[RMDB]
RNA sequence: GGGAACGACUCGAGUAGAGUCGAAAAGAACGAAUGUUGUAGGUUAAAAUUAUCUACACAAAUAGAACCUCAACGUAACUUAACAGUGCAACCUCUAUUGGAUAUAAACUAAUAUGGAUCCGGUUAAUUUUAUCAAGACAUAUGCGCCUAGAGGUUCCUGUAAAGGAAUUUUCGAAUUCCUUUACAGAAAAGAAACAACAACAACAAC
Reactivity to DMS in 0.01 (KOAc 150mM, MgCl2 10mM, bicine 150mM(pH8.5), 24C), signal-to-noise 2, nucleotides 027 to 156: g000a100a110c100g000a170a080u010g020u010u040g010u010a020g000g000u000u010a020a100a120a150u010u000a030u000c010u000a050c030a040c030a050a050a120u010a100g000a090a080c010c000u000c010a070a080c050g010u010a030a100c130u020u000a060a070c070a060g020u010g000c030a080a100c030c010u010c110u000a080u000u000g010g030a100u000a080u000a060a080a080c030u010a030a040u000a040u000g000g010a060u000c040c020g010g000u000u000a030a100u000u000u000u000a030u010c050a070a090g010a090c060a050u000a080u000g010c060g000c000c060u000a120g000a060g030g000u010u000c030
Reactivity to 2A3 in 0.01 (KOAc 150mM, MgCl2 10mM, bicine 150mM(pH8.5), 24C), signal-to-noise 2, nucleotides 027 to 156: g030a110a020c040g030a070a070u060g050u090u050g000u070a010g020g000u030u060a070a220a090a120u270u160a090u070c040u080a020c000a010c020a020a070a000u100a000g010a010a010c000c000u020c010a000a030c050g030u040a070a030c050u100u070a050a060c050a110g050u030g070c010a010a030c020c000u010c040u020a080u090u090g020g010a000u040a040u070a200a110a040c020u030a080a050u020a010u080g060g020a040u030c030c020g020g000u030u060a130a100u150u140u140u070a050u140c040a100a020g020a020c010a010u080a050u090g030c010g000c040c000u020a060g000a000g000g000u000u000c000